RNA sequence: GGGAACGACUCGAGUAGAGUCGAAAAUCCUAAGUCACGAAAGUGAUGCGAUGAAAGAGAUUGUCAGUUCAAUCGGAAACGAUUGAACUUGGAUUUAUCUCUGGAGCAUCACAUUUCGUGAUAUGGAAAAACAAAACACGAUUCGUCGUGUUUUGAAGAGGAAUAACAGUUUCGACUGUUAUUCCUCAAAAGAAACAACAACAACAAC
Reactivity to DMS in 0.01 (KOAc 150mM, MgCl2 10mM, bicine 150mM(pH8.5), 24C), signal-to-noise 4, nucleotides 027 to 156: u000c010c000u000a070a240g020u010c010a010c000g020a020a020a040g030u010g010a010u000g010c010g010a170u000g010a210a160a060g000a020g000a020u000u010g000u010c000a050g000u000u000c000a010a010u000c000g010g000a160a190a300c010g020a020u000u010g010a010a010c010u000u010g030g010a040u000u000u000a020u000c000u000c000u010g000g020a230g010c010a010u000c000a010c010a050u000u000u000c020g010u000g010a000u000a100u000g000g010a050a110a100a150a190c010a010a010a010a000c010a010c000g000a070u000u020c300g040u000c000g030u000g000u000u000u010u000g000a130a180
Reactivity to 2A3 in 0.01 (KOAc 150mM, MgCl2 10mM, bicine 150mM(pH8.5), 24C), signal-to-noise 6, nucleotides 027 to 156: u010c010c000u030a070a030g020u000c000a000c010g000a000a010a010g010u000g000a000u000g010c000g300a300u040g010a030a010a010g000a000g000a000u010u020g010u020c010a000g000u000u000c000a000a000u000c000g010g040a050a060a060c010g000a000u000u000g000a000a000c010u000u040g030g000a010u150u250u190a040u000c000u000c000u000g000g010a010g000c000a000u000c000a000c000a030u000u000u000c010g010u000g000a000u010a030u010g000g030a050a120a010a020a000c010a000a000a010a000c010a000c000g020a000u050u060c220g060u010c000g010u100g000u010u000u000u000g010a040a030
An RNA of 207 nucleotides, treated with DMS and 2A3 and read out base by base. For DMS, 10,883 sequencing reads were counted. Reactivities are given for positions 27 through 156.